Description:
Structure probing data (2A3) for a 207-nucleotide construct. 2A3 adducts were read by reverse transcription with SuperScript II with manganese. The reactions ran in a buffer of 150 mM KOAc, 10 mM MgCl2 and 150 mM bicine (pH 8.5), at 24 C.
RNA sequence: GGGAACGACUCGAGUAGAGUCGAAAAACGAUUUUCCAAAUCAGUAACUAUGUUCAUUUUUUUAGGAGUAGGACGCCUAGCCAGUAUGGAAGAGGAUUUUCUAGAUCCUCUCUUCAACAUCUUUGAUCUCAAUGGAAUGCAAAACCCCAUGGUGUAAUCAAUCGCAGGAAUUCGUUCCUGCGAUUGAAAAAGAAACAACAACAACAAC
Reactivity to 2A3 in 0.01 (KOAc 150mM, MgCl2 10mM, bicine 150mM(pH8.5), 24C), signal-to-noise 1, nucleotides 027 to 156: a000c020g000a020u060u030u030u000c040c000a010a050a040u170c020a090g090u180a100a140c100u130a100u220g000u040u010c060a230u170u070u130u070u040u110u100a130g010g000a020g040u040a010g050g000a000c050g000c000c000u000a020g040c070c000a040g110u120a060u110g040g000a020a020g010a010g000g050a000u020u070u110u200c200u060a070g020a060u020c000c070u000c000u020c000u060u010c000a020a080c000a010u040c090u060u120u080g090a060u000c040u010c090a000a060u010g010g030a090a070u300g080c070a000a000a070a120c000c050c040c000a010u100g030g000u050g140u180a060a040
Reactivities are given for positions 27 through 156. High 2A3 reactivity points to a flexible backbone, as in loops and unpaired stretches.